[RMDB]
RNA sequence: GGGAACGACUCGAGUAGAGUCGAAAAACGCCGCAUCGCUACGGCGAUGCGGCGACCUGCCAGUGGUUUUACCCUAUGGUAGGUUACGUCAUGCUGUUCUACCACAGGGUAGAACCACGGACAGGAAUACUUGUAUCCUAUUCGUAGGAUACAAGUAAAAAGAAACAACAACAACAAC
Reactivity to 2A3 in 0.01 (KOAc 150mM, MgCl2 10mM, bicine 150mM(pH8.5), 24C), signal-to-noise 2, nucleotides 027 to 126: a000c000g010c000c000g000c040a000u010c040g000c070u070a050c300g090g000c000g000a000u010g000c060g000g000c000g000a010c000c000u000g020c010c020a050g020u010g020g030u000u010u020u020a010c000c000c000u000a020u010g000g000u000a000g000g010u060u090a040c040g030u060c030a100u270g110c110u140g070u080u030c000u000a000c020c000a020c020a040g000g000g020u010a000g000a000a000c000c000a000c000g000g020a030c000a000g030g070a010a060